[RMDB]
RNA sequence: GGGAACGACUCGAGUAGAGUCGAAAAGAUAUGGACGUAGCUCGAUAAGCUGGGAUCGGAAACGAUCCGCAGCUUUUGACGAGCGAGGUCCUAAGUCAAAACCGACAAGGGUUCGCCCUUGUCGGAAGAGGGAAGAGUACUUCGGUACUCUUCCCUCAAAAGAAACAACAACAACAAC
Reactivity to DMS in 0.01 (KOAc 150mM, MgCl2 10mM, bicine 150mM(pH8.5), 24C), signal-to-noise 2, nucleotides 027 to 126: g010a030u000a280u000g000g000a010c020g010u000a300g010c000u000c000g000a090u010a000a000g050c000u000g020g000g010a010u000c000g000g010a050a020a090c000g010a000u000c000c000g040c000a020g010c000u000u000u010u030g030a250c080g000a000g000c000g020a110g000g010u010c010c010u000a000a070g000u020c020a080a040a140a150c000c000g030a000c000a000a010g000g020g020u000u010c300g020c000c000c000u000u000g000u000c000g000g000a010a020